[RMDB]
RNA sequence: GGGAACGACUCGAGUAGAGUCGAAAACUCCGUCCCAGCCUCCAUCCCCGCCCCAGGCCGCGGUCGGUCCGGGCUUCUUCGGAAGUCCCGUUGCCGUCGCGAAGAGUUCGCCUCUGUCAGCCGCGGGGCUUGGGGCCAGGGACGGGACCCUGUCCGCCUAUCUAUAGGCGUUCGCGCCUAUAGAUAGAAAAGAAACAACAACAACAAC
Reactivity to 2A3 in 0.01 (KOAc 150mM, MgCl2 10mM, bicine 150mM(pH8.5), 24C), signal-to-noise 2, nucleotides 027 to 156: c060u040c000c000g000u000c000c000c000a000g010c020c010u040c010c010a000u010c000c000c000c000g020c000c050c020c030a040g030g000c020c000g000c030g040g100u200c040g000g020u000c020c000g000g000g020c020u000u000c000u010u050c120g160g020a030a030g120u270c000c000c000g040u060u150g030c010c000g010u000c000g000c000g000a030a010g010a000g050u130u220c220g080c120c010u090c040u080g160u230c140a020g000c030c030g000c020g000g020g000g000c000u000u000g000g000g010g000c000c010a080g000g000g000a000c000g000g000g000a000c000c010c000u010g040u050c040c040g000c010
Chemical mapping of a 207-nucleotide RNA with 2A3. The RNA was probed in 150 mM KOAc, 10 mM MgCl2 and 150 mM bicine (pH 8.5) at 24 C. 2A3 adducts were read by reverse transcription with SuperScript II with manganese. The data come from the RNA Mapping Database (RMDB), library RSTRND.